[RMDB]
RNA sequence: GGGAACGACUCGAGUAGAGUCGAAAAGAUAUGGACUGGGUAUGGAGAGACUGGUCGGAAACGACCAGCUCUCUAUGAAGUACGUCCUAAGUCGCGGGACAGAAAUUACUUCGGUAAUUUCUGUCAAUCAUCCAUUUCAGUUCGCUGAAAUGGAUGAAAAAGAAACAACAACAACAAC
Reactivity to 2A3 in 0.01 (KOAc 150mM, MgCl2 10mM, bicine 150mM(pH8.5), 24C), signal-to-noise 3, nucleotides 027 to 126: g020a010u070a030u120g030g000a020c060u150g070g070g200u110a010u030g020g010a000g000a000g100a300c000u010g000g010u000c010g010g010a090a050a000c000g010a000c000c010a000g010c010u000c000u050c000u010a020u010g010a010a020g040u070a080c040g010u020c000c000u020a110a030g050u020c030g010c110g160g140g000a000c010a010g020a000a000a000u010u020a010c000u040u090c290g080g000u000a000a000u000u000u020c000u010g000u000c000a000a020
Reactivity to DMS in 0.01 (KOAc 150mM, MgCl2 10mM, bicine 150mM(pH8.5), 24C), signal-to-noise 5, nucleotides 027 to 126: g010a050u000a300u010g000g010a010c010u010g010g010g020u000a020u000g010g000a020g000a010g010a140c000u000g010g010u010c000g000g000a070a070a170c010g010a010c000c000a010g010c040u000c000u000c000u000a010u000g020a100a100g000u010a130c130g000u000c000c000u000a050a160g000u000c010g020c180g010g000g010a010c000a000g000a010a010a010u000u000a000c000u000u010c230g020g000u000a000a000u000u000u010c000u010g000u000c000a050a080

Overview
Structure probing data (2A3 and DMS) for a 177-nucleotide construct. For DMS the reverse transcriptase was MarathonRT. For 2A3 the reverse transcriptase was SuperScript II with manganese. The data come from the RNA Mapping Database (RMDB), library TTRDEL. Conditions: 150 mM KOAc, 10 mM MgCl2 and 150 mM bicine (pH 8.5), 24 C.